This 177-nucleotide RNA was probed chemically with DMS and 2A3.
For 2A3 the reverse transcriptase was SuperScript II with manganese.
It was measured as part of the RMDB library OK1LIB.
[RMDB]
RNA sequence: GGGAACGACUCGAGUAGAGUCGAAAAGUCAACAUCUCCAGGGGUAGACUGCUGGUUUAUACUUGUCCCGUAUAAUGGGAGGUCUUCUAUAACAGACCCAUUUCUGUCAGCAUUUUCUUUAUCCUGGGCCAGGUACUAUAUUCGUAUAGUACCUGGCAAAAGAAACAACAACAACAAC
Reactivity to DMS in 0.01 (KOAc 150mM, MgCl2 10mM, bicine 150mM(pH8.5), 24C), signal-to-noise 4, nucleotides 027 to 126: g010u020c060a120a070c190a100u040c050u000c000c000a030g010g020g010g000u010a060g010a040c300u000g010c000u000g000g000u000u030u020a030u020a030c060u020u020g020u000c000c000c010g000u020a040u010a010a050u030g020g020g000a130g010g020u010c030u000u010c140u050a180u050a110a120c230a030g000a020c000c000c070a070u010u010u000c090u000g000u030c010a010g000c000a040u000u000u020u010c030u000u000u010a130u050c020c020u000g000g000
Reactivity to 2A3 in 0.01 (KOAc 150mM, MgCl2 10mM, bicine 150mM(pH8.5), 24C), signal-to-noise 8, nucleotides 027 to 126: g070u070c060a040a050c020a220u090c060u020c050c000a010g010g010g000g030u040a010g010a040c020u010g000c010u000g040g100u030u170u070a100u040a050c060u100u130g150u140c000c020c000g010u070a070u060a070a070u090g030g010g040a100g040g030u010c010u080u030c070u120a210u080a260a140c070a050g020a060c000c020c010a070u060u100u050c060u090g060u040c000a010g000c000a020u120u100u020u030c030u020u110u070a100u080c000c000u010g000g000